[RMDB]
RNA sequence: GGGAACGACUCGAGUAGAGUCGAAAAUUAGUUUUACAGCAGCCCUAGAAUUAAUUUGUGUUAAAGCCUGAACUGAUCCUUUACCAAAAGAUUUAGUACCAAGUAUUAUUGCUCUUUUAUGAUCUUGCUAUUCAAUCAGAUUCGUCUGAUUGAAUAGAAAAGAAACAACAACAACAAC
Reactivity to DMS in 0.01 (KOAc 150mM, MgCl2 10mM, bicine 150mM(pH8.5), 24C), signal-to-noise 7, nucleotides 027 to 126: u000u010a020g000u000u000u010u010a050c100a110g010c040a050g000c020c030c100u000a040g010a040a020u010u010a020a030u000u000u000g010u010g010u020u010a040a110a180g000c020c020u000g010a060a070c090u000g000a050u010c010c030u000u010u010a100c100c090a040a060a060a040g000a040u010u000u000a040g020u010a050c040c080a050a110g010u000a040u000u000a040u010u010g010c090u000c030u000u010u010u010a090u010g010a080u010c010u000u000g000
Reactivity to 2A3 in 0.01 (KOAc 150mM, MgCl2 10mM, bicine 150mM(pH8.5), 24C), signal-to-noise 8, nucleotides 027 to 126: u010u010a020g040u010u010u040u070a080c070a040g040c010a010g010c010c010c000u040a040g040a040a010u040u040a030a060u040u110u080g140u010g050u060u110a080a040a030g030c000c020u040g030a060a040c010u020g010a060u050c010c020u040u050u100a100c040c010a040a030a040a070g090a090u090u120u130a030g010u010a030c000c040a110a020g040u010a050u110u030a050u040u130g020c000u010c010u050u090u070u050a130u160g070a040u010c000u020u030g010
Chemical mapping of a 177-nucleotide RNA with DMS and 2A3. For 2A3 the reverse transcriptase was SuperScript II with manganese. The reactions ran in a buffer of 150 mM KOAc, 10 mM MgCl2 and 150 mM bicine (pH 8.5), at 24 C.